[RMDB]
RNA sequence: GGGAACGACUCGAGUAGAGUCGAAAACACUAGCUUCCGAAUCUGUACCUGAGAGUCAAAGCUCACGAUUUGACAGCAUACGAAGCUAGAAAAUGCUGCGACUCAGGGAUACCUAUCAGAGCUAUAAGAUAUUGAUUUAUUUCGAUAGGUCAAUAUCAAAAGAAACAACAACAACAAC
Reactivity to 2A3 in 0.01 (KOAc 150mM, MgCl2 10mM, bicine 150mM(pH8.5), 24C), signal-to-noise 9, nucleotides 027 to 126: c030a010c020u010a000g000c000u100u020c030c020g030a040a090u020c030u030g010u020a040c000c000u020g010a030g000a000g100u020c010a010a010a000g010c010u020c020a080c040g070a030u020u000u030g030a000c000a000g010c000a010u060a070c060g060a050a000g000c000u000a000g000a000a000a000a000u060g000c000u010g000c000g010a000c000u000c000a000g000g000g020a020u040a030c000c010u020a020u050c010a010g000a000g020c010u030a030u020a130a020
Reactivity to DMS in 0.01 (KOAc 150mM, MgCl2 10mM, bicine 150mM(pH8.5), 24C), signal-to-noise 9, nucleotides 027 to 126: c060a190c090u000a010g000c000u010u020c020c100g000a120a080u020c070u010g000u010a080c030c020u010g000a050g010a090g000u000c050a040a180a060g010c030u010c130a100c240g010a090u000u010u000g010a130c050a020g010c130a060u020a150c300g000a080a040g010c010u010a010g000a060a050a040a040u010g000c010u010g010c280g000a080c010u000c000a230g000g000g010a080u010a030c050c040u010a040u010c020a060g000a060g010c060u010a040u010a090a110